An RNA of 177 nucleotides, treated with 2A3 and DMS and read out base by base. The reactions ran in a buffer of 150 mM KOAc, 10 mM MgCl2 and 150 mM bicine (pH 8.5), at 24 C. Values cover nucleotides 27 to 126. It was measured as part of the RMDB libraries RFM100 and RFMREP.
RNA sequence: GGGAACGACUCGAGUAGAGUCGAAAAAAAGUCGAGUGAGCCUGCUCCAAAGGCUCUUUCGUUGAUUAUGUGUGCCAGAACAACGCCAUAGGUAUCAUUCUUCGUCUUCUUAGGCGCGGAACAUCUACUAAUCUACAGAGUUCGCUCUGUAGAUUAGAAAAGAAACAACAACAACAAC
Reactivity to 2A3 in 0.01 (KOAc 150mM, MgCl2 10mM, bicine 150mM(pH8.5), 24C), signal-to-noise 9, nucleotides 027 to 126: a000a000a000g130u070c040g010a020g020u040g000a000g000c000c000u030g030c070u070c090c030a090a080a030g000g000c000u010c000u010u020u000c000g000u010u060g030a090u070u160a090u120g150u030g040u090g050c020c020a030g050a090a040c060a060a020c060g030c030c020a060u070a060g050g040u090a050u130c030a050u060u020c000u020u010c000g020u010c010u160u040c040u150u300a030g010g000c020g000c010g020g010a010a020c010a050u030c010u020a070
Reactivity to DMS in 0.01 (KOAc 150mM, MgCl2 10mM, bicine 150mM(pH8.5), 24C), signal-to-noise 8, nucleotides 027 to 126: a050a060a090g020u010c030g010a050g000u000g010a020g020c000c000u000g000c150u030c150c170a090a080a030g010g010c000u000c000u000u000u000c020g010u010u000g010a070u010u010a060u000g010u010g010u010g010c030c050a090g010a100a080c140a070a090c130g010c080c040a090u010a040g010g000u010a040u010c100a140u000u000c010u000u000c010g010u000c010u010u010c210u020u010a040g010g010c010g000c050g000g010a020a030c180a050u000c050u000a130